[RMDB]
RNA sequence: GGGAACGACUCGAGUAGAGUCGAAAAGAUAUGGAUGAACGCAACAGCCCAUUCGGUUUCGGAAACGAAACCGAGAUGGGACAUGCGUGUCCUAAGUCAAAGUUUAUCCCGUUCGCGGGAUAAACAAGUCUAUCCGGUAGUUCGCUACCGGAUAGACAAAAGAAACAACAACAACAAC
Reactivity to DMS in 0.01 (KOAc 150mM, MgCl2 10mM, bicine 150mM(pH8.5), 24C), signal-to-noise 2, nucleotides 027 to 126: g000a090u000a300u000g000g000a000u010g010a180a010c000g030c000a000a100c220a250g000c000c000c000a010u000u000c000g000g020u000u000u000c000g000g000a090a070a180c000g000a000a000a000c000c010g000a020g000a000u000g000g020g010a010c160a060u000g000c000g010u000g020u000c000c000u000a040a170g010u000c050a070a090a210g000u010u000u000a000u000c000c000c000g000u000u020c220g010c010g000g010g000a000u000a000a010a000c010a050a070
Reactivity to 2A3 in 0.01 (KOAc 150mM, MgCl2 10mM, bicine 150mM(pH8.5), 24C), signal-to-noise 1, nucleotides 027 to 126: g050a030u120a050u180g020g000a030u080g200a210a050c010g000c020a010a070c060a230g040c030c000c000a010u010u000c000g000g000u000u000u000c030g010g010a050a060a060c020g020a000a000a000c000c000g010a020g000a010u000g000g000g010a000c010a040u020g000c000g050u020g000u030c000c000u030a150a030g030u070c090a230a010a000g010u010u010u000a000u000c010c020c010g020u020u010c160g030c010g000g000g020a000u010a000a000a010c000a000a030